[RMDB]
RNA sequence: GGGAACGACUCGAGUAGAGUCGAAAAGAUAUGGAAUUAGCUUUGAUCUUACGGUUUCGGAAACGAAAUUAAGGGAGCUACUUCCUAAGUCAAAAGUCUAUCAUCACGUUCGCGUGAUGAUAGACAACACAUACACCACGUUCGCGUGGUGUAUGUGAAAAGAAACAACAACAACAAC
Reactivity to 2A3 in 0.01 (KOAc 150mM, MgCl2 10mM, bicine 150mM(pH8.5), 24C), signal-to-noise 4, nucleotides 027 to 126: g020a020u080a040u160g010g000a000a020u030u000a000g000c010u200u170u150g110a120u190c020u040u060a070c160g180g010u000u000u020c010g030g000a050a040a060c010g010a010a000a020u070u050a040a040g040g020g020a000g010c000u000a000c000u000u000c000c000u010a120a020g040u020c020a030a010a090a080g000u000c000u010a010u010c000a010u000c000a000c020g030u090u080c300g020c020g160u000g000a000u010g000a000u000a000g000a000c000a000a000
Reactivity to DMS in 0.01 (KOAc 150mM, MgCl2 10mM, bicine 150mM(pH8.5), 24C), signal-to-noise 4, nucleotides 027 to 126: g000a030u000a300u010g010g000a020a010u000u000a000g020c010u000u000u020g000a070u010c000u000u010a100c300g020g000u000u000u000c000g000g000a140a040a200c000g000a000a010a010u010u000a020a020g020g010g000a020g010c000u000a010c130u000u000c000c000u000a030a150g000u000c040a050a070a120a100g010u000c000u010a000u000c000a010u000c010a000c010g000u010u000c240g010c020g020u000g000a010u000g000a010u000a000g000a000c000a030a050